[RMDB]
This 207-nucleotide RNA was probed chemically with 2A3 and DMS. The 2A3 profile rests on 5,658 reads. The data come from the RNA Mapping Database (RMDB), library RNAMAK. Conditions: 150 mM KOAc, 10 mM MgCl2 and 150 mM bicine (pH 8.5), 24 C.
RNA sequence: GGGAACGACUCGAGUAGAGUCGAAAAGGUAAUUCGUUACCACGUGACCGUAGGGCUGAACUACAGAUCGAAAGGGUCGACGAUCAUCGCUUCGAAAGAGGCGAUGGGAGACCCUGAGAUCUGCAGCCCUAAACGGGGAUGCCCUCUUCGGAGGGAACAAGUACUGUAAUUUCGAUUACAGUACUUGAAAAGAAACAACAACAACAAC
Reactivity to 2A3 in 0.01 (KOAc 150mM, MgCl2 10mM, bicine 150mM(pH8.5), 24C), signal-to-noise 5, nucleotides 027 to 156: g030g010u030a010a050u110u210c270g060u120u040a010c010c030a070c140g100u100g120a080c010c000g030u020a020g010g000g010c000u000g020a060a030c040u210a080c300a000g000a000u010c010g110a170a040a050g000g000g000u010c010g000a220c010g000a020u000c000a000u000c010g000c000u000u000c020g050a090a060a040g010a000g000g010c000g000a000u000g000g000g000a010g010a000c010c000c000u010g000a000g000a000u000c000u000g000c020a000g000c010c010c000u020a020a010a000c000g000g010g010g020a020u170g050c010c010c010u010c010u020u040c210g100g000a010g000g000g010a010a020
Reactivity to DMS in 0.01 (KOAc 150mM, MgCl2 10mM, bicine 150mM(pH8.5), 24C), signal-to-noise 4, nucleotides 027 to 156: g020g010u000a020a060u000u000c170g030u000u010a040c010c010a100c090g010u010g000a170c000c000g020u000a050g010g020g040c030u000g010a100a230c040u010a170c000a010g010a020u020c010g000a150a150a020g010g020g030u000c000g000a110c170g000a070u000c000a020u000c020g020c000u000u000c000g000a140a140a270g000a030g000g020c000g010a000u000g000g010g000a150g010a020c000c000c000u000g000a240g000a010u000c000u000g000c000a020g000c000c000c000u020a000a030a050c030g000g000g000g010a120u010g000c010c010c010u000c000u000u000c290g040g010a060g010g050g020a010a050